RNA sequence: GGGAACGACUCGAGUAGAGUCGAAAAACUUUUAGCGAUUAUCGUUAUAGAAAUGUCCUUGGCAUAUCGCUAUGCACAGAGGUAUUAGUAGCGCAAUAGCUAUUGAAGGACAUUACCUCACAAAUAAUAUGACAAAGAGAUUCGUCUCUUUGUCAUAAAAAGAAACAACAACAACAAC
Reactivity to DMS in 0.01 (KOAc 150mM, MgCl2 10mM, bicine 150mM(pH8.5), 24C), signal-to-noise 6, nucleotides 027 to 126: a100c060u000u000u000u000a000g000c000g020a120u010u010a050u000c070g020u010u010a100u000a090g010a050a060a030u000g000u000c000c000u000u000g020g010c050a030u000a010u000c050g010c030u000a010u010g000c120a090c240a090g010a020g000g010u000a040u000u000a050g020u000a010g010c020g000c160a080a100u010a140g010c010u000a010u000u000g000a050a040g000g000a030c030a020u000u000a030c020c010u000c030a140c290a060a050a070u010a070a110
Reactivity to 2A3 in 0.01 (KOAc 150mM, MgCl2 10mM, bicine 150mM(pH8.5), 24C), signal-to-noise 5, nucleotides 027 to 126: a010c010u160u140u020u060a000g010c010g030a030u130u090a040u300c030g020u050u060a110u030a130g080a020a060a020u030g020u000c000c000u030u080g050g000c030a030u030a020u220c030g000c010u020a030u110g050c080a070c050a120g090a030g040g080u060a040u100u080a090g040u000a000g000c000g010c060a130a210u060a070g000c010u020a030u050u110g040a030a010g010g000a000c000a000u010u030a020c000c010u030c020a010c010a020a090a020u210a100a050
This 177-nucleotide RNA was probed chemically with DMS and 2A3. Values cover nucleotides 27 to 126. 2A3 adducts were read by reverse transcription with SuperScript II with manganese. The reactions ran in a buffer of 150 mM KOAc, 10 mM MgCl2 and 150 mM bicine (pH 8.5), at 24 C. For DMS, 7,563 sequencing reads were counted. Values are in units of 0.01, from 0 to 300, in steps of 10.